[RMDB]
RNA sequence: GGGAACGACUCGAGUAGAGUCGAAAAGCUGAAAGCUUCGGCUUUCAGCAAAGAAAAAGAUGUACAGCUACUAAGGUACAUCAAGAAUAGAAGCGAAAAGAAAAAGCUUAACGUUCGCGUUAAGCAACAGACUAUGACACUUCGGUGUCAUAGUCUGAAAAGAAACAACAACAACAAC
Reactivity to 2A3 in 0.01 (KOAc 150mM, MgCl2 10mM, bicine 150mM(pH8.5), 24C), signal-to-noise 2, nucleotides 027 to 126: g000c000u010g030a020a000a020g000c000u060u110c220g060g000c020u000u020u000c000a010g030c000a030a000a010g070a000a170a000a010a000g000a000u000g010u010a000c020a060g090c130u050a050c100u140a300a040g110g000u000a010c000a000u020c000a010a020g070a050a040u190a020g050a120a010g070c150g060a060a080a050a050g210a020a090a010a010a010g010c000u000u000a020a000c020g020u010u090c290g000c000g100u010u010a010a000g000c000a000a000
Reactivity to DMS in 0.01 (KOAc 150mM, MgCl2 10mM, bicine 150mM(pH8.5), 24C), signal-to-noise 1, nucleotides 027 to 126: g030c020u000g000a000a040a010g000c000u000u060c120g020g040c000u000u000u000c030a030g020c010a000a000a050g000a070a080a060a120a040g050a020u000g000u000a000c030a200g020c140u040a130c280u000a040a070g040g000u000a000c000a000u000c000a080a060g000a080a080u000a120g020a130a110g030c060g010a000a070a100a100g010a070a180a060a070a150g000c000u000u000a000a000c000g010u000u000c190g010c000g010u000u000a000a000g010c000a090a020